[RMDB]
Notes: The data come from the RNA Mapping Database (RMDB), library OK3TST. Structure probing data (DMS and 2A3) for a 207-nucleotide construct. DMS adducts were read by reverse transcription with MarathonRT. Reactivities are given for positions 27 through 156. Reactivities are rounded to 0.1 and cut off at 0 and 3. The RNA was probed in 150 mM KOAc, 10 mM MgCl2 and 150 mM bicine (pH 8.5) at 24 C. For 2A3, 959 sequencing reads were counted.
RNA sequence: GGGAACGACUCGAGUAGAGUCGAAAAGUUAACGUGUUUAUCGUUCGCCUUCACCGUGACGGUAUGACUUUUGAAGGCGAUAGCCGCAAGCACAUUAGCCGCCCGGAUCUGAUUUGUGAUACGUAUCAUGAAUUUGAUUUUGAUAUGACUACAGGCGUCUCCCUGAAAAAUUCGUUUUUCAGGGAGAAAAAGAAACAACAACAACAAC
Reactivity to DMS in 0.01 (KOAc 150mM, MgCl2 10mM, bicine 150mM(pH8.5), 24C), signal-to-noise 2, nucleotides 027 to 156: g020u000u010a030a070c020g020u000g020u000u010u000a060u000c040g000u010u000c000g010c000c010u000u020c010a080c130c090g010u010g010a130c030g020g000u010a300u010g000a060c070u000u000u010u020g030a100a030g010g010c020g010a050u010a050g050c120c030g030c300a040a070g000c010a050c030a030u010u000a060g030c030c020g010c000c000c040g050g000a030u000c000u010g000a050u000u000u000g020u000g000a040u000a120c300g020u010a060u010c000a030u000g000a030a040u000u010u000g010a070u000u000u000u020g010a140u000a110u000g020a160c060u000a120c070a080g010g020c050g030
Reactivity to 2A3 in 0.01 (KOAc 150mM, MgCl2 10mM, bicine 150mM(pH8.5), 24C), signal-to-noise 2, nucleotides 027 to 156: g010u010u040a020a010c020g000u010g020u020u040u090a130u140c070g010u040u030c000g030c000c000u000u010c020a040c030c030g090u080g210a080c160g000g060u160a150u130g130a110c040u140u130u120u200g030a000a000g010g000c030g000a000u050a020g120c070c030g030c060a010a010g000c000a010c000a040u020u020a000g040c000c020g020c000c000c000g020g010a010u000c000u020g000a020u010u010u000g020u010g010a000u050a170c100g140u270a030u010c000a000u020g020a020a010u010u010u010g030a020u020u070u060u120g090a050u080a070u190g050a010c040u070a030c170a150g000g120c050g090